Source information
This 207-nucleotide RNA was probed chemically with 2A3 and DMS. Reactivities are given for positions 27 through 156. For DMS the reverse transcriptase was MarathonRT. For DMS, 3,496 sequencing reads were counted.
RNA sequence: GGGAACGACUCGAGUAGAGUCGAAAACAGCCAGACGCAGGAGAUGGAUGGCUCAGCAGUAAUCGUGCUGCUUGAGCUUGGUGUCUAAUGGGGACAGUAGUGACAGGAAGUUCACAGGGACUGGAAGACAUGAGUUCUCUGAGGGAAAGGAAGGUGAUCACGAUUUAUGGUUCGCCAUAAAUCGUGAAAAAGAAACAACAACAACAAC
Reactivity to 2A3 in 0.01 (KOAc 150mM, MgCl2 10mM, bicine 150mM(pH8.5), 24C), signal-to-noise 3, nucleotides 027 to 156: c010a010g070c020c010a040g040a060c050g020c050a030g010g070a030g000a040u110g080g040a030u090g030g000c000u010c000a000g010c010a000g000u060a100a220u210c190g180u220g080c020u000g000c000u040u180g000a000g000c000u000u010g000g000u040g010u000c020u050a090a070u140g000g020g020g040a020c040a030g110u150a000g010u040g070a030c020a040g030g080a070a030g020u060u080c040a040c020a080g040g020g030a040c030u050g010g030a040a020g010a000c050a030u130g030a040g040u110u020c080u000c000u030g030a030g000g020g020a050a040a040g030g000a000a000g040g020u030g000a030
Reactivity to DMS in 0.01 (KOAc 150mM, MgCl2 10mM, bicine 150mM(pH8.5), 24C), signal-to-noise 2, nucleotides 027 to 156: c010a090g020c030c000a100g010a170c060g030c060a050g000g010a060g020a070u010g000g030a190u000g020g000c020u000c000a020g000c000a020g050u020a050a160u000c250g010u000g010c000u010g010c010u000u020g020a040g030c000u000u000g040g040u000g060u000c050u000a050a080u000g010g010g040g030a110c040a110g010u010a150g020u010g000a100c060a130g000g010a100a070g000u000u000c030a090c030a130g000g000g030a070c080u000g020g000a060a080g000a060c040a100u000g010a120g000u000u010c050u000c050u000g000a080g010g000g000a050a050a050g010g000a070a040g000g050u000g030a150
Description:
In probing experiments dimethyl sulfate is read out at A N1 and C N3, which are open when not base-paired. The RNA was probed in 150 mM KOAc, 10 mM MgCl2 and 150 mM bicine (pH 8.5) at 24 C.